The record gives the reactivity of an RNA of 177 nucleotides to DMS. DMS adducts were read by reverse transcription with MarathonRT.
RNA sequence: GGGAACGACUCGAGUAGAGUCGAAAAGAUAUGGAAAGAACUACUGCAAUACUUCGUGGAACUACAAGGGGUCAUCGGAAACGAUGAUACUUGCCACGAGAGUAUUGCAGUAGUUCUUUCCUAAGUCCAACUACUAUGUGUUCGCACAUAGUAGUUGAAAAGAAACAACAACAACAAC
Reactivity to DMS in 0.01 (KOAc 150mM, MgCl2 10mM, bicine 150mM(pH8.5), 24C), signal-to-noise 5, nucleotides 027 to 126: g000a100u010a300u000g000g010a020a010a010g010a010a010c000u000a010c000u000g000c000a000a010u000a000c000u000u000c000g020u000g000g010a110a030c100u030a300c020a010a010g000g000g020g020u010c000a000u000c000g000g010a110a120a260c000g000a010u000g010a020u010a080c000u000u000g000c000c000a000c010g010a040g010a020g020u000a000u000u000g010c000a000g000u000a000g010u000u000c000u000u000u010c000c000u000a010a080g010u000c040